An RNA of 207 nucleotides, treated with 2A3 and DMS and read out base by base. Conditions: 150 mM KOAc, 10 mM MgCl2 and 150 mM bicine (pH 8.5), 24 C.
RNA sequence: GGGAACGACUCGAGUAGAGUCGAAAAGCGCAAAUCCACAAACGCCAACGAUGAGCGUUUCGCUGUAGCCGCUUAAGGCAACAGCCGGGGCCGCCUGAGCCCUGUUAUCAAAGACGGCUGGCGGGGGUAAUUACUUAUUGCUUCGGCAAUAAGUAAAAGUCAGAUUUAAGUUCGCUUAAAUCUGACUAAAAGAAACAACAACAACAAC
Reactivity to 2A3 in 0.01 (KOAc 150mM, MgCl2 10mM, bicine 150mM(pH8.5), 24C), signal-to-noise 3, nucleotides 027 to 156: g050c050g020c030a030a050a080u060c070c020a080c050a130a050a020c030g010c020c010a110a030c120g190a160u170g030a060g010c020g010u020u100u110c050g000c010u020g020u010a030g000c000c010g040c230u270u190a130a090g000g000c010a020a010c000a000g020c010c040g010g000g000g000c010c060g000c010c020u040g010a010g010c020c000c010u020g040u050u070a080u090c020a000a050a030g010a040c000g000g020c000u030g080g010c030g010g000g010g000g010u020a040a100u070u010a000c000u000u000a000u000u000g010c000u020u040c110g080g000c000a000a000u000a000a000g000u000a000a000a000
Reactivity to DMS in 0.01 (KOAc 150mM, MgCl2 10mM, bicine 150mM(pH8.5), 24C), signal-to-noise 2, nucleotides 027 to 156: g000c020g030c030a010a100a040u000c060c020a070c030a030a240a120c010g000c010c020a090a110c130g000a120u000g010a250g010c000g040u000u000u000c030g010c010u010g030u000a080g050c020c010g030c300u000u020a070a210g050g050c000a050a010c010a050g000c000c070g020g040g000g010c000c010g050c080c110u020g010a160g010c000c010c000u000g030u000u030a160u000c050a070a060a210g000a170c240g000g020c000u000g020g020c000g030g000g000g040g030u000a030a110u010u000a010c000u000u010a020u010u000g000c000u000u020c300g050g010c010a020a000u000a010a010g010u000a000a010a070
Values cover nucleotides 27 to 156.